[RMDB]
RNA sequence: GGGAACGACUCGAGUAGAGUCGAAAAGAUAUGGAGAUGAACCUCACGUGCCGCCAGGGAGCUCCCUUCGGAAACGAAGGAAGAGCGAAGAACUGGAGUGGGCACGUGAGGUUCAUCUCCUAAGUCAGAUUGUAGUAAAGUUCGCUUUACUACAAUCAAAAGAAACAACAACAACAAC
Reactivity to DMS in 0.01 (KOAc 150mM, MgCl2 10mM, bicine 150mM(pH8.5), 24C), signal-to-noise 3, nucleotides 027 to 126: g010a080u010a300u000g010g000a030g010a010u010g010a010a020c000c000u000c000a010c000g010u000g020c010c000g000c010c000a020g000g000g010a100g010c000u000c000c010c000u010u000c000g020g000a120a080a190c000g020a030a010g000g010a100a100g010a010g010c010g000a090a180g000a150a230c020u000g000g000a060g020u020g010g020g030c000a000c000g020u000g020a000g000g000u000u000c000a000u000c000u000c000c000u000a010a050g010u000c050a140